[RMDB]
RNA sequence: GGGAACGACUCGAGUAGAGUCGAAAAGCUCCAGGCAAGAGUCCUGGCUGUGGAAAGAUACCUAAAGGAUCAACAGCUCCUGGGAAUUUGGGGCUGCUCUGGAAAACUCAUUUGCACCACUAACAUGCAACACCAAGGAAUUCGUUCCUUGGUGUUGAAAAGAAACAACAACAACAAC
Reactivity to DMS in 0.01 (KOAc 150mM, MgCl2 10mM, bicine 150mM(pH8.5), 24C), signal-to-noise 4, nucleotides 027 to 126: g010c110u000c010c030a020g000g020c020a210a100g030a150g010u040c010c000u000g000g010c100u000g030u010g000g000a090a120a070g000a110u020a070c010c020u010a040a090a090g010g010a090u020c030a100a070c030a010g010c000u000c020c020u000g010g020g010a130a210u000u040u010g010g010g000g000c000u000g010c010u000c020u000g010g000a060a050a060a110c060u010c050a040u000u020u010g020c070a050c020c030a040c050u010a060a080c150a060u030g000
Reactivity to 2A3 in 0.01 (KOAc 150mM, MgCl2 10mM, bicine 150mM(pH8.5), 24C), signal-to-noise 9, nucleotides 027 to 126: g020c020u020c000c000a010g020g000c050a160a170g060a070g220u180c000c000u010g020g000c040u020g010u030g020g030a100a080a040g070a070u170a140c010c010u050a070a060a040g060g010a060u080c010a030a200c000a020g000c000u010c010c010u040g000g050g180a110a130u210u120u100g000g000g000g000c000u000g000c010u000c000u010g040g020a040a030a010a020c040u060c050a070u060u050u150g050c030a020c020c000a020c030u070a110a020c050a120u160g010
Source: RMDB libraries RFM100 and RFMREP, as collected in RNAgym.
Chemical mapping of a 177-nucleotide RNA with DMS and 2A3.
2A3 adducts were read by reverse transcription with SuperScript II with manganese.
Values cover nucleotides 27 to 126.
Conditions: 150 mM KOAc, 10 mM MgCl2 and 150 mM bicine (pH 8.5), 24 C.